[RMDB]
RNA sequence: GGGAACGACUCGAGUAGAGUCGAAAAACUUGGGAAACUGAGGCAUGAGACUCACUUGAACCCCAGAGGUGGAGGUUGCAGUGAGCCAAGAUUGCGCCACCGCACUCCAGCCUGAGCGACAGAGUGACACCCCUUUACGAUUCGUCGUAAAGGGGUGAAAAGAAACAACAACAACAAC
Reactivity to DMS in 0.01 (KOAc 150mM, MgCl2 10mM, bicine 150mM(pH8.5), 24C), signal-to-noise 3, nucleotides 027 to 126: a100c040u010u000g000g000g000a150a110a120c050u000g010a020g020g020c120a070u000g010a280g010a050c030u000c010a030c010u000u000g010a030a180c100c020c010c020a130g020a080g020g030u000g020g000a020g000g000u000u000g030c000a030g010u000g000a120g020c000c030a060a130g000a170u030u010g000c100g000c000c020a020c030c020g040c000a050c030u000c000c020a050g010c010c000u000g000a070g020c080g010a120c110a140g020a060g010u000g010a230
Reactivity to 2A3 in 0.01 (KOAc 150mM, MgCl2 10mM, bicine 150mM(pH8.5), 24C), signal-to-noise 2, nucleotides 027 to 126: a000c000u040u030g000g000g010a060a060a050c030u040g010a000g040g030c140a010u060g010a000g030a040c000u000c000a000c000u030u030g020a040a050c020c000c000c000a020g010a040g090g110u010g000g000a050g080g030u170u140g030c000a020g000u010g040a090g000c010c000a100a100g160a150u140u300g030c090g010c040c010a000c030c020g020c000a000c020u000c000c020a160g050c040c010u090g010a060g100c050g060a030c040a180g060a010g080u040g030a010